[RMDB]
RNA sequence: GGGAACGACUCGAGUAGAGUCGAAAAUGGCUGCGCAAUGGGGCCGUCGUCACUCCAGGGCCCCAGGUGGAGAUGGCCCAGAAUGGUUCAAGCCGCAUCUUAACCUUGCGAGGCUGCCAACUGGGGGCCUAUGUCGCUUUUUCGAAAGCGACAUAGGAAAAGAAACAACAACAACAAC
Reactivity to DMS in 0.01 (KOAc 150mM, MgCl2 10mM, bicine 150mM(pH8.5), 24C), signal-to-noise 3, nucleotides 027 to 126: u000g000g020c020u000g000c030g020c060a070a090u010g020g000g000g020c000c010g000u000c060g000u000c070a110c070u000c040c070a150g000g010g010c000c000c000c000a020g010g020u000g020g000a040g000a030u010g010g010c010c010c060a100g000a100a090u010g000g010u000u000c160a050a060g010c080c070g000c170a050u000c030u000u010a070a100c060c030u000u010g000c030g000a160g010g010c020u000g010c030c040a040a110c070u010g000g020g010g000g020
Reactivity to 2A3 in 0.01 (KOAc 150mM, MgCl2 10mM, bicine 150mM(pH8.5), 24C), signal-to-noise 1, nucleotides 027 to 126: u060g060g010c020u050g000c050g000c030a040a140u080g040g040g000g000c020c010g050u000c000g070u030c010a090c100u050c070c030a120g000g040g040c010c010c000c000a000g020g000u010g000g020a040g010a070u030g020g000c000c000c000a020g080a100a080u110g050g020u150u140c080a050a050g060c100c000g000c040a030u060c040u070u040a080a070c010c000u010u020g020c000g000a020g020g080c050u040g030c030c020a040a020c010u010g040g000g000g040g020